[RMDB]
RNA sequence: GGGAACGACUCGAGUAGAGUCGAAAACCGAAGCCCCAUUGAGGGAUAAUACAGGCUCUCCCAUCCAACUCCUAUUCCAACACGUCCUCGUCGUACAGAGUGGUAACAUGUGUCACUACAUAUCCAACAUAGUGUCGCAUCUUCGGAUGCGACACAAGACCAUUAUGAGGUUCGCCUCAUAAUGGUCAAAAGAAACAACAACAACAAC
Reactivity to 2A3 in 0.01 (KOAc 150mM, MgCl2 10mM, bicine 150mM(pH8.5), 24C), signal-to-noise 1, nucleotides 027 to 156: c030c010g020a070a090g040c000c000c000c000a090u060u110g040a150g020g010g000a050u160a060a020u080a110c100a120g000g000c010u010c000u010c040c000c000a010u020c040c020a040a040c020u000c010c000u040a080u080u040c010c000a000a030c020a030c080g030u030c010c000u020c020g050u040c000g020u020a080c040a040g060a010g090u030g040g010u060a020a080c070a170u050g050u030g040u030c010a010c070u090a000c020a040u120a090u030c020c030a040a070c030a230u150a120g020u000g000u000c000g000c000a000u000c040u020u040c020g110g010a000u000g000c020g000a000c040a000c000a000a000
Chemical mapping of a 207-nucleotide RNA with 2A3. It was measured as part of the RMDB library M2RFPK. For 2A3, 791 sequencing reads were counted. For 2A3 the reverse transcriptase was SuperScript II with manganese. The RNA was probed in 150 mM KOAc, 10 mM MgCl2 and 150 mM bicine (pH 8.5) at 24 C.